RNA sequence: GGGAACGACUCGAGUAGAGUCGAAAAGAAAGAGCCUGAAUACGGAGAACCGUAACGCAUGACCGAAUAUUCAGCCCAGUUCACGACGUAAGUCGUGCGCCCGAGUCUUCGUCUGGGCGCUGGGGUCACGUACAUGCGUCAGGCAGGACGAAGAGAAUCAUAGCGUUUUAUUCGUAAAACGCUAUGAAAAAGAAACAACAACAACAAC
Reactivity to DMS in 0.01 (KOAc 150mM, MgCl2 10mM, bicine 150mM(pH8.5), 24C), signal-to-noise 2, nucleotides 027 to 156: g000a140a120a110g000a160g010c000c000u000g000a090a280u000a030c030g020g040a180g000a100a240c010c020g000u000a140a260c050g010c000a030u000g020a180c040c010g040a070a150u000a170u000u010c070a160g000c000c030c020a070g010u000u000c000a030c010g030a040c000g000u020a110a220g020u000c000g050u000g030c090g020c000c000c000g010a110g010u000c040u000u000c030g040u000c030u000g000g010g020c000g010c030u000g000g000g000g020u000c040a110c080g030u000a080c030a050u000g000c050g060u020c020a090g020g000c020a050g020g020a070c010g000a020a040g000a190g020a240a300
Reactivity to 2A3 in 0.01 (KOAc 150mM, MgCl2 10mM, bicine 150mM(pH8.5), 24C), signal-to-noise 3, nucleotides 027 to 156: g030a020a090a010g080a010g010c010c000u040g050a120a050u070a020c000g000g020a120g140a300a200c010c000g000u020a030a020c010g000c010a000u010g010a050c010c060g040a170a080u140a150u220u180c070a090g070c000c000c000a020g040u160u150c030a010c000g020a000c030g030u100a050a140g010u010c000g000u000g000c030g010c010c000c000g060a050g050u010c010u010u000c010g010u000c020u050g000g000g000c000g000c000u000g010g020g000g000u120c070a010c070g020u050a050c000a010u000g030c000g020u020c000a000g000g000c020a010g020g030a010c000g010a010a000g020a010g020a020a040
The record gives the reactivity of an RNA of 207 nucleotides to DMS and 2A3. The DMS profile rests on 3,762 reads. For 2A3 the reverse transcriptase was SuperScript II with manganese. It was measured as part of the RMDB library OK3TST.